[RMDB]
RNA sequence: GGGAACGACUCGAGUAGAGUCGAAAAAUGGCGAAUGCAUGGGGAACUACAUCUGUGUCGCGAGUUCGAUUCUCGCCAGGCCCUGGUCCUGUAGCUCAGUUGGUAGAGCAAGCUGUUCCCCGGACACAAAAUCCAGCUAGGUUCGCCUAGCUGGAAACAUCAAUCUAACGUUCGCGUUAGAUUGAUGAAAAGAAACAACAACAACAAC
Reactivity to 2A3 in 0.01 (KOAc 150mM, MgCl2 10mM, bicine 150mM(pH8.5), 24C), signal-to-noise 3, nucleotides 027 to 156: a020u120g080g010c050g090a120a030u130g030c090a090u100g010g000g000g000a010a020c030u110a030c100a130u100c040u030g070u030g070u150c020g000c000g010a000g000u010u020c010g010a010u010u020c000u000c000g000c010c000a000g000g020c020c010c130u100g070g050u120c000c000u000g010u020a000g010c000u000c010a040g030u140u140g100g150u170a010g000a010g000c020a010a010g010c040u030g000u010u010c000c000c000c000g010g000a020c010a000c010a040a120a000a040u020c000c010a000g000c000u000a010g020g020u030u040c110g030c040c000u000a000g000c000u000g000g000a010a000a000
Reactivity to DMS in 0.01 (KOAc 150mM, MgCl2 10mM, bicine 150mM(pH8.5), 24C), signal-to-noise 4, nucleotides 027 to 156: a060u010g020g020c030g000a100a050u010g000c020a120u000g020g000g000g010a060a060c010u000a040c050a080u010c050u020g020u010g030u000c010g020c010g010a040g010u010u000c050g000a300u010u000c040u000c010g020c040c030a120g000g020c010c070c070u010g040g000u000c010c010u020g010u000a050g010c020u010c010a120g000u000u010g010g030u000a070g000a040g040c010a160a150g000c050u000g010u000u000c000c000c000c000g000g000a160c070a080c060a060a050a080a090u000c010c000a010g000c010u000a020g030g020u000u010c300g000c010c000u000a000g010c000u000g000g010a000a010a050